[RMDB]
RNA sequence: GGGAACGACUCGAGUAGAGUCGAAAAAUGCACCAGAAAAGAUUAUUGACAAUGCCUAUUUUGAGCAAUUUUUAGAUACAUCUGAUGAAUGGAUUUCUAAGAUGACUGGAAUUAAAGAAAGACAUUGGCUAAAAAUGGUAUUCGUACCAUUUUUAGCAAAAGAAACAACAACAACAAC
Reactivity to DMS in 0.01 (KOAc 150mM, MgCl2 10mM, bicine 150mM(pH8.5), 24C), signal-to-noise 5, nucleotides 027 to 126: a050u040g020c100a160c020c010a130g020a100a060a090a100g000a120u010u030a040u010u000g010a300c070a010a010u000g010c020c010u020a080u010u020u020u010g010a120g030c100a020a000u000u000u000u000u030a040g000a080u020a130c020a000u000c010u010g000a140u030g000a030a010u020g020g000a120u010u000u000c000u000a140a040g000a010u000g010a110c020u000g000g010a030a020u000u010a070a090a130g010a030a040a030g020a030c020a020u000u000g000
Reactivity to 2A3 in 0.01 (KOAc 150mM, MgCl2 10mM, bicine 150mM(pH8.5), 24C), signal-to-noise 8, nucleotides 027 to 126: a000u150g020c050a080c020c010a030g170a010a140a010a000g120a060u170u150a060u150u230g040a050c010a030a030u050g030c000c000u140a250u110u090u090u140g080a080g050c030a010a020u000u000u020u080u160a060g010a070u100a120c010a000u000c010u060g080a070u140g040a100a030u100g120g270a100u070u050u010c010u010a020a030g010a020u010g030a030c010u020g000g030a010a010u070u090a120a050a080g070a030a030a010g030a010c040a040u010u050g050